An RNA of 177 nucleotides, treated with 2A3 and DMS and read out base by base. Conditions: 150 mM KOAc, 10 mM MgCl2 and 150 mM bicine (pH 8.5), 24 C. DMS adducts were read by reverse transcription with MarathonRT.
RNA sequence: GGGAACGACUCGAGUAGAGUCGAAAAGAUAUGGAGAGUGGUUCGAGGAUCGUGCCGUCGGAAACGACGGUCACGGGAGAACGCUCCUAAGUCAAAAGUAUUCAAGUAGUUCGCUACUUGAAUACAACAGAACAUCGGAGUUCGCUCCGAUGUUCUGAAAAGAAACAACAACAACAAC
Reactivity to 2A3 in 0.01 (KOAc 150mM, MgCl2 10mM, bicine 150mM(pH8.5), 24C), signal-to-noise 1, nucleotides 027 to 126: g000a010u110a030u200g020g000a080g000a000g260u300g050g070u120u000c070g090a300g090g000a040u010c000g000u000g030c000c000g000u000c020g020g020a120a110a100c020g020a010c000g000g000u070c010a000c010g020g000g000a020g000a000a000c010g000c010u050c010c000u050a180a000g050u050c030a020a000a020a280g000u010a000u020u010c000a000a000g000u000a000g030u010u070c300g000c160u020a000c000u020u010g000a000a000u000a000c010a000a000
Reactivity to DMS in 0.01 (KOAc 150mM, MgCl2 10mM, bicine 150mM(pH8.5), 24C), signal-to-noise 1, nucleotides 027 to 126: g000a060u000a290u030g000g000a060g000a020g010u020g010g000u010u000c000g020a090g020g010a030u000c010g000u000g000c010c000g040u000c000g010g000a140a200a190c000g060a020c000g000g000u020c030a010c000g000g000g030a110g030a010a000c010g000c000u000c000c000u000a060a300g010u010c040a010a120a140a130g010u000a000u000u010c000a030a000g000u000a000g010u010u040c280g050c000u000a030c000u010u000g010a020a000u000a000c000a060a150